[RMDB]
RNA sequence: GGGAACGACUCGAGUAGAGUCGAAAAGGAAACGGCAGGAAUGCGCAUUCCGGAAACGACAGCAGCAGAGCCCGCUAUACGUGAAGGAUUGGCUGAAGCGUAUUGAAAUACUGAGCCUCCAGCAAGAAGUUGUACUUGUCUUCGGACAAGUACAACUAAAAGAAACAACAACAACAAC
Reactivity to DMS in 0.01 (KOAc 150mM, MgCl2 10mM, bicine 150mM(pH8.5), 24C), signal-to-noise 4, nucleotides 027 to 126: g010g000a050a050a050c080g000g020c020a130g000g020a070a030u020g010c100g000c110a050u000u000c030c000g010g020a040a070a050c060g000a130c070a070g000c050a070g000c050a060g010a110g020c080c020c020g000c070u000a010u010a020c040g010u010g000a160a110g000g000a220u030u030g010g010c010u000g010a180a170g000c040g030u000a020u010u010g010a070a090a120u030a060c100u000g010a090g000c010c020u020c020c010a130g000c090a100a070g000a120
Reactivity to 2A3 in 0.01 (KOAc 150mM, MgCl2 10mM, bicine 150mM(pH8.5), 24C), signal-to-noise 4, nucleotides 027 to 126: g080g010a100a150a000c040g010g000c000a020g040g110a060a070u100g110c060g000c070a020u050u000c000c000g010g040a010a030a000c010g000a010c010a000g030c000a010g030c000a000g020a020g070c010c010c020g020c020u010a020u010a090c010g030u030g060a060a030g030g030a100u130u220g170g000c020u020g020a110a010g020c020g010u020a010u010u100g090a080a070a020u140a090c100u090g020a000g070c020c030u020c000c010a050g010c030a020a030g070a080